[RMDB]
This 177-nucleotide RNA was probed chemically with 2A3 and DMS. The RNA was probed in 150 mM KOAc, 10 mM MgCl2 and 150 mM bicine (pH 8.5) at 24 C. Source: RMDB library OK1LIB, as collected in RNAgym. The 2A3 profile rests on 962 reads.

RNA sequence: GGGAACGACUCGAGUAGAGUCGAAAAACACACACCCUGUCAUUGUUUGUUAUACGUGGUUUGUAAUGUGGAACGGAGGGUAAUCGACUCGGAAGCAAAGUUCACCAUUUAGCACUGUGCAGGUGAGCCUGUAGCCUGAGUUCGCUCAGGCUACAGGAAAAGAAACAACAACAACAAC
Reactivity to 2A3 in 0.01 (KOAc 150mM, MgCl2 10mM, bicine 150mM(pH8.5), 24C), signal-to-noise 2, nucleotides 027 to 126: a000c000a000c010a010c000a060c110c000c000u010g060u090c000a090u080u000g150u260u040u070g070u000u120a140u030a030c060g010u030g080g000u090u000u080g040u010a160a280u160g010u000g020g020a040a000c060g060g020a090g080g040g000u090a080a000u100c000g000a040c110u000c000g020g010a000a000g030c000a000a120a030g000u090u030c080a120c020c000a000u060u050u120a040g000c000a000c080u000g030u040g000c000a000g000g000u040g000a000g210
Reactivity to DMS in 0.01 (KOAc 150mM, MgCl2 10mM, bicine 150mM(pH8.5), 24C), signal-to-noise 2, nucleotides 027 to 126: a070c110a200c160a160c270a070c100c000c010u040g000u000c020a110u000u020g000u000u000u090g000u050u020a200u010a050c100g040u000g000g010u000u000u000g020u010a010a180u030g000u000g000g000a080a030c040g010g010a080g000g000g000u010a050a090u040c040g000a090c020u010c030g000g000a120a170g020c180a130a040a190g000u010u000c000a080c000c010a080u050u010u040a030g000c040a050c060u000g020u010g040c090a000g010g000u000g000a100g010